[RMDB]
The record gives the reactivity of an RNA of 177 nucleotides to DMS. For DMS the reverse transcriptase was MarathonRT. The DMS profile rests on 588 reads. Conditions: 150 mM KOAc, 10 mM MgCl2 and 150 mM bicine (pH 8.5), 24 C. The data come from the RNA Mapping Database (RMDB), library OK2TRN.
RNA sequence: GGGAACGACUCGAGUAGAGUCGAAAAUGCAGUACUUAAAUAUAGAAUACUGUAACACAAGGCCUUACCGCAAUAUUAAUUGUUGUCAUAUACUGACUUUUCACUAUUGUAAAAUGAAUAGUUAUUAUGCUAUUAUAAUAUUCGUAUUAUAAUAGCAAAAAGAAACAACAACAACAAC
Reactivity to DMS in 0.01 (KOAc 150mM, MgCl2 10mM, bicine 150mM(pH8.5), 24C), signal-to-noise 1, nucleotides 027 to 126: u000g000c010a000g010u000a020c030u000u000a060a210a230u000a200u020a150g000a120a070u000a020c000u000g010u000a090a070c130a060c180a120a190g000g010c040c040u000u010a150c070c000g000c060a030a100u000a070u000u000a140a180u000u000g010u000u000g010u070c150a030u010a130u000a120c280u000g000a030c010u000u000u010u000c010a010c060u040a070u000u040g000u010a070a070a040a090u010g000a000a040u000a090g000u020u000a020u030u000a180